Structure probing data (2A3 and DMS) for a 177-nucleotide construct. Values cover nucleotides 27 to 126. Source: RMDB library OK1LIB, as collected in RNAgym.
RNA sequence: GGGAACGACUCGAGUAGAGUCGAAAAUGGCGGUCUCUGGCAUAUUGGUCCCUUAUCCGGCCAGAAGGGUGCCAGGCUUUGCCGCAGGUGGCAUGGGGGUGUCCCAUAGCGGGUGGGUGCAUGGUGGCGAUAUAUUAUAAUUCGUUAUAAUAUAUCGAAAAGAAACAACAACAACAAC
Reactivity to 2A3 in 0.01 (KOAc 150mM, MgCl2 10mM, bicine 150mM(pH8.5), 24C), signal-to-noise 7, nucleotides 027 to 126: u100g060g010c010g020g120u050c060u000c000u100g010g010c010a020u040a120u130u130g040g020u210c010c020c000u010u010a110u030c020c010g020g000c000c010a010g050a030a040g100g060g020u020g000c000c000a010g010g020c020u090u120u210g000c000c010g010c000a010g010g050u090g020g030c090a070u050g000g000g010g030g040u070g080u080c010c010c010a020u040a020g040c030g010g010g050u170g020g010g000u040g020c020a040u060g020g010u020g030g000
Reactivity to DMS in 0.01 (KOAc 150mM, MgCl2 10mM, bicine 150mM(pH8.5), 24C), signal-to-noise 9, nucleotides 027 to 126: u030g010g010c010g000g000u010c260u020c020u010g000g000c010a020u000a110u030u010g010g010u020c010c040c030u010u070a100u020c240c300g010g000c010c010a040g010a130a100g010g020g010u000g000c000c000a010g010g010c300u020u020u030g010c010c010g010c040a060g000g010u020g000g000c090a040u000g000g000g000g010g020u020g010u020c010c010c010a050u010a070g010c080g010g000g000u030g000g000g000u010g010c090a050u010g000g010u020g010g000